The record gives the reactivity of an RNA of 177 nucleotides to DMS and 2A3. Values cover nucleotides 27 to 126. The 2A3 profile rests on 13,442 reads. DMS (dimethyl sulfate) methylates the pairing face of unpaired adenines and cytosines. DMS adducts were read by reverse transcription with MarathonRT. It was measured as part of the RMDB library OK1LIB.

RNA sequence: GGGAACGACUCGAGUAGAGUCGAAAAGGAGAGUUCGCCGGUUCGUUCUUCGAACUCGUCCACCGAAAUCGGGUCGAACUGUGCACUGAACCCAACUUCGAUCAGUUCACCCUGAACCGUGCGGGUCGGGGAUAAAAUGAUUCGUCAUUUUAUCCCCAAAAGAAACAACAACAACAAC
Reactivity to DMS in 0.01 (KOAc 150mM, MgCl2 10mM, bicine 150mM(pH8.5), 24C), signal-to-noise 6, nucleotides 027 to 126: g010g000a160g000a100g000u010u000c010g000c090c100g010g010u020u000c040g020u020u020c080u000u010c020g000a020a020c050u000c030g010u000c030c060a170c090c030g010a040a070a090u030c090g000g000g010u000c110g020a030a020c020u010g010u010g020c100a120c130u020g000a070a080c040c040c100a100a110c160u010u010c060g000a090u000c030a020g000u000u000c030a070c000c020c020u010g010a030a050c050c040g010u030g000c030g000g000g000u010c100
Reactivity to 2A3 in 0.01 (KOAc 150mM, MgCl2 10mM, bicine 150mM(pH8.5), 24C), signal-to-noise 9, nucleotides 027 to 126: g080g020a040g010a010g060u030u050c040g010c020c040g040g040u050u070c040g040u100u030c030u080u040c020g020a030a010c030u010c030g100u050c020c040a080c050c020g030a050a030a040u120c040g010g000g010u060c090g000a010a010c020u030g030u090g040c100a050c120u140g060a100a090c020c030c040a080a070c030u120u110c050g090a110u060c010a020g010u030u030c020a030c030c010c000u030g010a040a040c020c020g050u110g040c030g000g030g040u070c060